[RMDB]
RNA sequence: GGGAACGACUCGAGUAGAGUCGAAAAAUGUGGGUGAAGGCAGGAGGCUGAUGGAAAGACUGGGGGGAAGAAAAGCCGAAAUGGAUUCACGGUGCCUUGGAUGAAGGACGAGAGGGGAACUGCAAGCCCUAUCUGACUGGUUCGCCAGUCAGAUAGGAAAAGAAACAACAACAACAAC
Reactivity to 2A3 in 0.01 (KOAc 150mM, MgCl2 10mM, bicine 150mM(pH8.5), 24C), signal-to-noise 4, nucleotides 027 to 126: a000u120g010u130g020g000g000u040g050a050a050g070g000c040a010g010g070a010g050g000c050u040g020a110u050g020g030a130a000a010g070a040c070u070g000g020g030g000g050g000a030a010g050a000a070a010a010g000c020c010g030a100a050a010u150g020g030a010u100u080c040a020c050g020g000u070g000c000c000u010u050g050g000a120u090g100a060a050g040g030a010c050g000a010g010a030g000g000g010g020a050a010c020u050g020c050a070a050g040c000
Reactivity to DMS in 0.01 (KOAc 150mM, MgCl2 10mM, bicine 150mM(pH8.5), 24C), signal-to-noise 3, nucleotides 027 to 126: a070u020g020u020g010g000g030u030g000a080a090g000g000c060a100g000g020a100g010g000c080u000g000a050u060g020g010a090a080a110g000a060c090u010g000g000g000g000g000g000a040a070g010a060a050a100a090g000c020c010g000a050a080a100u020g020g010a070u000u030c090a100c000g030g020u040g010c020c040u000u050g000g000a060u060g010a060a050g010g020a070c120g000a080g000a070g000g020g000g000a030a070c090u030g030c050a080a140g010c130